[RMDB]
RNA sequence: GGGAACGACUCGAGUAGAGUCGAAAAUGAGGCACGCGCAAUCGCGCGUGAGCGUCACGUGGAGAAUCGUGGGGGCAGGAGUGGUACUCAGGUAAUCGUGUCCGCGCGCGAGCCUCUCUCGGCGCAGGGCGCUGCCCAGGUUCGCCUGGGUGGCGCCAAAAGAAACAACAACAACAAC
Reactivity to 2A3 in 0.01 (KOAc 150mM, MgCl2 10mM, bicine 150mM(pH8.5), 24C), signal-to-noise 3, nucleotides 027 to 126: u210g000a010g010g030c020a000c040g020c000g000c020a020a110u100c090g000c000g000c000g010u000g000a000g000c030g040u040c010a000c040g010u030g020g070a050g020a040a070u070c030g030u020g000g010g000g000g000c010a010g000g050a030g020u060g030g010u050a020c010u010c010a020g030g040u050a040a040u040c000g020u020g010u020c020c000g040c000g010c000g000c000g020a000g010c020c000u010c010u000c000u000c000g010g000c000g000c010a020g040
Reactivity to DMS in 0.01 (KOAc 150mM, MgCl2 10mM, bicine 150mM(pH8.5), 24C), signal-to-noise 4, nucleotides 027 to 126: u050g000a120g020g010c000a040c030g000c000g020c010a100a070u080c130g010c000g030c020g040u010g000a030g000c070g000u010c010a100c090g010u030g010g040a070g020a110a080u000c030g020u020g000g000g000g000g020c010a050g000g010a060g020u020g030g000u000a100c030u000c090a120g000g020u000a080a080u010c020g000u010g010u010c000c010g010c070g000c000g000c010g010a030g000c190c040u010c050u010c020u000c020g010g000c000g000c020a130g000